[RMDB]
RNA sequence: GGGAACGACUCGAGUAGAGUCGAAAACUGGUUUUCUGGAUAAGACCAGAUUCUCUACCAACAUGGAUUGACUUUAAAUUCCUAGGGAAGGGAACAUUAAAAUCCUGUCAAGAUUUGGGGCUCCUCAGCUUACCUUCAUCUUCGGAUGAAGGUAAGCAAAAGAAACAACAACAACAAC
Reactivity to DMS in 0.01 (KOAc 150mM, MgCl2 10mM, bicine 150mM(pH8.5), 24C), signal-to-noise 1, nucleotides 027 to 126: c030u000g010g010u000u000u020u000c130u050g000g000a170u010a070a090g000a050c010c000a000g000a190u000u010c000u000c030u020a130c060c060a050a040c070a030u000g020g010a050u000u000g000a030c150u000u000u000a040a080a180u000u000c000c000u000a130g020g000g020a050a090g010g010g010a010a030c080a130u000u010a040a050a060a040u000c000c040u010g000u000c090a050a170g000a150u000u020u000g000g030g040g010c060u030c010c000u000c110a150
Reactivity to 2A3 in 0.01 (KOAc 150mM, MgCl2 10mM, bicine 150mM(pH8.5), 24C), signal-to-noise 2, nucleotides 027 to 126: c010u010g000g040u030u050u020u020c100u170g150g020a170u100a160a060g010a030c010c010a000g000a040u100u000c010u000c040u020a100c020c030a070a070c020a040u100g000g020a030u000u030g040a020c030u110u080u160a000a190a020u090u060c000c000u040a070g090g000g020a060a110g060g000g020a030a000c010a030u140u200a070a070a010a060u010c010c000u080g060u020c040a050a020g050a080u080u080u160g030g020g020g030c030u050c000c020u030c030a010